[RMDB]
Source: RMDB library TTRDEL, as collected in RNAgym. An RNA of 177 nucleotides, treated with DMS and 2A3 and read out base by base.
RNA sequence: GGGAACGACUCGAGUAGAGUCGAAAAGAUAUGGAUUAGGACAUGCGAGUACAUCGGAAACGAUGUAUUUCGCAACAGCCUACGGUCCUAAGUCGCGCGUUAUAUGGCUUUCGAGCCAUAUAACGAAACAUGCUAGUCGUUUCGACGACUAGCAUGUAAAAGAAACAACAACAACAAC
Reactivity to DMS in 0.01 (KOAc 150mM, MgCl2 10mM, bicine 150mM(pH8.5), 24C), signal-to-noise 4, nucleotides 027 to 126: g020a100u000a170u000g000g000a020u000u000a030g000g030a050c050a300u000g000c000g010a030g000u000a000c000a000u010c010g000g000a090a060a200c000g010a010u010g020u000a000u000u000u000c000g000c030a050a080c180a160g020c030c010u000a060c300g000g020u000c010c010u010a070a080g000u000c050g020c240g000c000g020u000u000a000u000a000u000g000g000c000u000u000u010c200g010a030g000c010c000a000u000a000u000a000a000c000g000a030a100
Reactivity to 2A3 in 0.01 (KOAc 150mM, MgCl2 10mM, bicine 150mM(pH8.5), 24C), signal-to-noise 2, nucleotides 027 to 126: g060a010u120a080u210g050g000a020u000u060a050g020g000a050c160a190u130g010c020g000a010g000u000a000c010a000u010c000g020g040a060a040a030c040g000a000u000g030u010a000u080u270u010c000g010c000a000a010c020a000g040c000c020u090a140c150g130g010u010c020c000u040a080a090g090u080c060g010c000g000c000g160u020u000a010u000a000u000g010g000c020u090u030u190c300g070a000g000c000c050a010u000a020u000a010a000c010g010a020a010